An RNA of 177 nucleotides, treated with 2A3 and DMS and read out base by base. 2A3 adducts were read by reverse transcription with SuperScript II with manganese. The RNA was probed in 150 mM KOAc, 10 mM MgCl2 and 150 mM bicine (pH 8.5) at 24 C.
RNA sequence: GGGAACGACUCGAGUAGAGUCGAAAACUGCGCGAAGGAUGAAAAGACCAAGCUAAUCAAGGUCUACGAGAAGCCCAAGACUAGAAUUUUUGAAAUCUUACCCUAUCAUUAUAACAUUCUGGUGAGGGUCGAUGAAUGGAUUCGUCCAUUCAUCGACAAAAGAAACAACAACAACAAC
Reactivity to 2A3 in 0.01 (KOAc 150mM, MgCl2 10mM, bicine 150mM(pH8.5), 24C), signal-to-noise 1, nucleotides 027 to 126: c000u110g040c040g030c050g040a140a040g060g050a060u110g030a050a000a060a140g000a010c040c000a060a050g000c050u180a120a070u180c000a050a110g000g020u020c000u010a010c030g150a010g040a100a010g010c000c000c000a020a000g050a040c060u080a040g010a130a300u010u040u150u100u290g050a060a080a060u060c030u160u100a090c000c000c010u050a120u120c060a040u100u170a030u010a170a040c030a000u000u000c000u040g000g000u010g040a040g000g050
Reactivity to DMS in 0.01 (KOAc 150mM, MgCl2 10mM, bicine 150mM(pH8.5), 24C), signal-to-noise 1, nucleotides 027 to 126: c060u000g060c060g030c080g000a080a150g000g000a020u000g000a070a100a060a100g010a060c020c010a100a120g000c150u030a080a110u000c090a090a090g000g030u000c000u010a060c270g020a110g000a090a150g000c000c000c000a020a070g020a030c060u000a030g010a000a020u030u000u000u000u000g000a120a070a040u000c140u020u010a140c040c030c060u000a120u000c000a030u000u000a080u000a080a130c140a120u000u000c020u000g000g000u000g000a300g020g010
For DMS the reverse transcriptase was MarathonRT.